[RMDB]
RNA sequence: GGGAACGACUCGAGUAGAGUCGAAAAGAUAUGGAGAAUCGCGAUAAGAUCUGCUUCGGAAACGAAGUUGAUCUUUUGACGCGACUCCUAAGUCAAACGUAUUGUACGGUUCGCCGUACAAUACGAAUCUAAUAUCGGGGUUCGCCCCGAUAUUAGAAAAAGAAACAACAACAACAAC
Reactivity to 2A3 in 0.01 (KOAc 150mM, MgCl2 10mM, bicine 150mM(pH8.5), 24C), signal-to-noise 3, nucleotides 027 to 126: g020a030u070a040u130g010g050a030g020a240a300u030c000g000c020g020a040u020a120a050g000a010u000c000u020g000c000u000u000c000g030g030a060a020a040c010g010a000a000g000u000u010g010a000u000c000u000u010u020u040g050a030c010g000c000g030a020c010u010c010c000u010a110a010g060u010c050a120a030a040c010g000u000a000u010u010g000u010a000c000g000g050u030u060c300g060c100c010g010u000a000c000a010a000u000a010c000g000a010a010
Reactivity to DMS in 0.01 (KOAc 150mM, MgCl2 10mM, bicine 150mM(pH8.5), 24C), signal-to-noise 4, nucleotides 027 to 126: g010a040u000a300u010g000g010a010g010a100a090u000c000g010c000g000a150u000a020a010g000a010u000c000u010g000c000u000u000c000g000g000a110a120a150c000g010a000a000g010u000u000g010a020u000c000u000u000u000u010g010a150c040g000c000g000a000c000u000c000c000u000a030a120g010u000c030a050a110a270c010g010u000a000u000u000g000u000a000c000g000g020u000u010c230g020c000c000g010u000a000c000a000a000u000a000c000g000a070a030